[RMDB]
RNA sequence: GGGAACGACUCGAGUAGAGUCGAAAAUGAAAGCUGUGUGAGCGAGGGGGGCGGAGGAUGAGGCCGUGCCCGGGCUCUGGCUGCAGCCGCCCGGGGACACGCCGUGCACCCUCGGGCUCCGGAAAAAUGGGAACACAUUAUUCGUAAUGUGUUCCCAAAAAGAAACAACAACAACAAC
Reactivity to DMS in 0.01 (KOAc 150mM, MgCl2 10mM, bicine 150mM(pH8.5), 24C), signal-to-noise 1, nucleotides 027 to 126: u020g010a080a100a150g000c060u000g010u000g010u010g000a050g000c020g010a120g000g010g020g000g000g030c020g000g000a030g010g010a080u000g020a150g010g020c050c100g010u000g010c010c000c030g010g000g000c050u020c120u020g040g000c070u000g020c230a080g020c030c080g000c000c000c020g000g020g000g000a040c020a080c030g000c010c000g000u010g020c040a070c040c010c000u000c010g000g000g020c010u000c010c000g000g020a010a020a040a100a110